[RMDB]
RNA sequence: GGGAACGACUCGAGUAGAGUCGAAAAUCGUACUUCGGUACGACAUUUUGGGGUCUUAAGCGGUCCAUCGAUCAUGGAACUACUCCUGAAGCCUCCACGGGAGCCAUGGGAGGACCGCUUAAGACGGAGGCACCCGUCUUAGCUUCUUCGGAAGCAAUAUCCUUGGAAAAUUCGUUUUCCAAGGAUAAAAAGAAACAACAACAACAAC
Reactivity to DMS in 0.01 (KOAc 150mM, MgCl2 10mM, bicine 150mM(pH8.5), 24C), signal-to-noise 1, nucleotides 027 to 156: u000c010g100u000a010c020u010u000c230g020g010u000a040c010g010a020c020a110u000u000u040u000g000g000g000g030u000c010u000u000a020a020g000c000g050g010u000c010c000a140u000c180g010a140u000c070a040u000g020g010a170a090c100u010a300c010u010c000c010u000g000a110a120g000c030c000u000c010c000a300c010g000g000g030a050g040c010c020a050u000g040g000g020a080g040g020a020c020c010g000c040u000u000a000a000g030a030c050g000g010a060g020g060c020a050c030c000c010g020u010c010u000u010a160g000c020u000u000c030u000u020c240g050g000a030a050g000c050a090a150
An RNA of 207 nucleotides, treated with DMS and read out base by base.
For DMS the reverse transcriptase was MarathonRT.
Conditions: 150 mM KOAc, 10 mM MgCl2 and 150 mM bicine (pH 8.5), 24 C.
The DMS profile rests on 2,178 reads.
Source: RMDB library RNAMAK, as collected in RNAgym.